Structure probing data (2A3 and DMS) for a 177-nucleotide construct. For 2A3 the reverse transcriptase was SuperScript II with manganese. The RNA was probed in 150 mM KOAc, 10 mM MgCl2 and 150 mM bicine (pH 8.5) at 24 C.

[RMDB]
RNA sequence: GGGAACGACUCGAGUAGAGUCGAAAACCAACCGCCUUCGGGCGGUUGGGAUGACAGUCGCGAGGAAAGUCCGGCCUGACUGUCCACGACAGAACCCGGCUUAAAUCUAUCGCUUCGGCGAUAGAAACUGAAAGUACCUUUUCGAAGGUACUUUCAGAAAAGAAACAACAACAACAAC
Reactivity to 2A3 in 0.01 (KOAc 150mM, MgCl2 10mM, bicine 150mM(pH8.5), 24C), signal-to-noise 3, nucleotides 027 to 126: c000c010a010a000c020c010g040c010c020u080u130c280g160g020g000c040g000g000u000u000g000g000g000a050u140g020a010c010a010g010u000c000g060c100g210a080g020g050a190a100a010g100u070c030c010g030g000c020c020u020g010a020c000u000g000u000c010c030a080c040g170a050c030a070g120a050a070c010c000c000g040g000c030u080u150a070a130a120u060c000u010a010u010c010g000c000u030u080c200g130g000c000g000a010u000a010g000a040a030a010
Reactivity to DMS in 0.01 (KOAc 150mM, MgCl2 10mM, bicine 150mM(pH8.5), 24C), signal-to-noise 4, nucleotides 027 to 126: c000c000a030a010c000c000g010c000c000u000u010c240g020g020g030c000g000g010u000u000g000g010g000a060u000g000a050c070a020g010u000c000g020c250g020a130g010g010a130a120a080g000u010c010c050g020g000c060c060u000g000a020c010u000g000u000c000c090a100c110g000a060c120a060g000a120a120c080c010c000g000g000c060u000u000a040a110a140u010c000u000a000u000c000g010c000u000u010c220g020g020c000g020a000u000a000g010a010a060a130